[RMDB]
Description
This 207-nucleotide RNA was probed chemically with 2A3 and DMS. 2A3 adducts were read by reverse transcription with SuperScript II with manganese. DMS adducts were read by reverse transcription with MarathonRT. The DMS profile rests on 15,533 reads. The 2A3 profile rests on 15,756 reads. The reactions ran in a buffer of 150 mM KOAc, 10 mM MgCl2 and 150 mM bicine (pH 8.5), at 24 C. Values cover nucleotides 27 to 156.
RNA sequence: GGGAACGACUCGAGUAGAGUCGAAAACGAUCAGUACGUUCGCGUACUGAUCGAAGCUACUGGAGACAGUAGCAAGUCGCAGACCUUAUUUGGCGGUAAUAAGGAAACCAAUAAGUAGGCUGGUCUUAUUGACUGCGACGACCGCCAUCCAGCCUUAUAGUAUGAUAGGAUUCGUCCUAUCAUACUAAAAAGAAACAACAACAACAAC
Reactivity to 2A3 in 0.01 (KOAc 150mM, MgCl2 10mM, bicine 150mM(pH8.5), 24C), signal-to-noise 6, nucleotides 027 to 156: c010g000a000u000c000a000g000u000a000c010g010u020u090c220g000c000g070u000a000c000u000g000a000u000c000g000a000a000g000c000u000a000c000u000g000g010a030g010a010c000a000g000u000a000g000c000a000a020g010u010c000g000c010a010g010a130c000c000u010u020a030u030u060u100g100g050c050g030g040u050a010a010u010a020a010g060g000a060a050a040c070c010a000a000u000a010a000g020u060a070g020g000c000u000g000g010u010c010u010u000a020u000u030g030a030c000u000g000c000g000a000c000g030a040c020c070g070c040c000a020u030c000c000a000g000c000c000u000u080a050
Reactivity to DMS in 0.01 (KOAc 150mM, MgCl2 10mM, bicine 150mM(pH8.5), 24C), signal-to-noise 4, nucleotides 027 to 156: c020g000a010u000c000a020g020u000a000c010g020u000u000c300g030c050g020u000a000c000u020g010a000u000c010g010a040a070g020c000u000a000c000u000g000g000a300g000a300c010a030g020u000a010g020c010a040a040g020u000c020g010c000a060g010a300c030c000u000u000a030u000u010u010g030g020c040g000g020u010a080a050u000a050a040g010g010a070a090a160c080c020a030a010u000a000a040g010u000a050g010g000c000u000g000g010u000c030u000u000a030u000u000g000a140c030u000g010c030g010a040c010g010a060c070c050g010c050c040a130u000c010c000a010g000c000c000u000u000a110